Conditions: 150 mM KOAc, 10 mM MgCl2 and 150 mM bicine (pH 8.5), 24 C. Structure probing data (DMS and 2A3) for a 177-nucleotide construct. Values are in units of 0.01, from 0 to 300, in steps of 10. DMS adducts were read by reverse transcription with MarathonRT. It was measured as part of the RMDB library OK2TST.
RNA sequence: GGGAACGACUCGAGUAGAGUCGAAAAAAGCAUGCAAAUGAAUUGGCACGUGCGAUUAAAUAUCGAACUCGUAUUGUUACUUUGGAAGGUGAUAUUGUAAACCCUGGUGGUUCUAUGACUGGUGGUGACAUGUACUCCCUUUCGAGGGAGUACAUGUAAAAGAAACAACAACAACAAC
Reactivity to DMS in 0.01 (KOAc 150mM, MgCl2 10mM, bicine 150mM(pH8.5), 24C), signal-to-noise 2, nucleotides 027 to 126: a070a080g010c030a040u000g010c060a060a140a090u010g010a110a090u010u000g040g000c030a070c070g000u010g010c020g000a080u000u000a060a070a080u000a060u020c000g000a070a090c060u000c050g000u000a080u000u010g000u000u020a030c050u010u000u000g010g010a100a090g000g020u000g000a050u000a020u010u000g020u010a050a070a070c040c030c010u000g000g020u000g020g000u000u000c070u000a040u010g020a040c050u000g010g000u000g010g010u000g000
Reactivity to 2A3 in 0.01 (KOAc 150mM, MgCl2 10mM, bicine 150mM(pH8.5), 24C), signal-to-noise 1, nucleotides 027 to 126: a000a050g000c020a060u040g040c040a000a000a250u230g030a130a090u150u130g110g000c040a010c070g050u090g000c000g000a000u090u070a160a120a050u200a060u080c030g040a080a060c020u000c010g020u090a050u110u140g040u000u020a090c060u050u030u060g050g000a090a000g020g030u040g050a020u020a000u120u120g050u120a140a080a030c020c010c000u010g070g020u040g070g110u010u080c140u150a110u050g070a060c010u000g000g070u000g030g050u060g010